[RMDB]
RNA sequence: GGGAACGACUCGAGUAGAGUCGAAAAAGUUGAAGAGCCUGAGCGAGAAGAAAAUUCUGAGGAAAUUGAAGUCUCGAAUUCCAGAAAGCAAAAGAGAGGUAAUUCAACUGACGCGCAUAUAAGGCGUCAAUACCCAAACUUUCGAGUUUGGGUAUUGAAAAGAAACAACAACAACAAC
Reactivity to DMS in 0.01 (KOAc 150mM, MgCl2 10mM, bicine 150mM(pH8.5), 24C), signal-to-noise 4, nucleotides 027 to 126: a060g000u000u000g030a050a050g010a300g020c020c010u010g010a150g030c010g000a100g000a210a140g000a140a090a090a050u000u000c000u040g030a080g010g000a050a080a090u000u000g020a140a220g000u000c040u010c010g010a030a060u000u000c290c050a080g010a140a050a130g020c080a070a080a130a100g020a150g000a030g000g000u010a030a260u000u000c020a010a010c020u000g000a050c050g000c010g030c070a090u010a120u010a110a090g010g000c010g010u000
Reactivity to 2A3 in 0.01 (KOAc 150mM, MgCl2 10mM, bicine 150mM(pH8.5), 24C), signal-to-noise 2, nucleotides 027 to 126: a010g020u010u010g010a040a010g000a020g060c030c030u050g050a000g030c040g030a100g010a100a020g020a000a290a040a050u050u020c080u170g040a070g020g050a000a030a090u120u130g050a190a040g050u000c010u000c020g010a000a020u080u000c010c000a010g100a130a130a020g010c090a100a030a130a000g200a030g010a000g000g050u020a030a020u000u000c000a000a000c000u010g010a000c030g000c040g020c160a010u240a030u030a300a140g100g000c000g010u000